[RMDB]
RNA sequence: GGGAACGACUCGAGUAGAGUCGAAAAGUCCCACCUUCGGGUGGGACAAGGAGGGGUCAACGAGGGACAUGCAGUAACUGAAGCCUCCACGGUUAAACUGCAACAGCCUCCCCACCGUUGACGGAGGCACCCACUGGGCUUGUCUUCGGACAAGCAACCAUGAUCCAUCUUUCGAGAUGGAUCAUGGAAAAGAAACAACAACAACAAC
Reactivity to 2A3 in 0.01 (KOAc 150mM, MgCl2 10mM, bicine 150mM(pH8.5), 24C), signal-to-noise 1, nucleotides 027 to 156: g020u000c000c000c000a010c000c000u060u040c300g160g010g020u000g010g000g000a000c020a000a000g010g020a090g000g050g000g000u020c030a030a020c030g030a140g000g000g020a060c020a240u060g000c020a000g010u020a000a010c010u020g040a090a000g000c000c000u000c010c000a000c000g000g010u080u010a240a250a150c010u030g000c010a110a060c050a160g040c010c020u100c010c020c000c000a050c010c030g010u010u040g000a020c030g000g010a000g000g040c000a030c000c000c000a010c020u160g010g180g000c000u010u000g010u000c010u030u070c170g010g010a000c000a000a000g020c000a000a020
Structure probing data (2A3) for a 207-nucleotide construct. For 2A3, 903 sequencing reads were counted. The reactions ran in a buffer of 150 mM KOAc, 10 mM MgCl2 and 150 mM bicine (pH 8.5), at 24 C.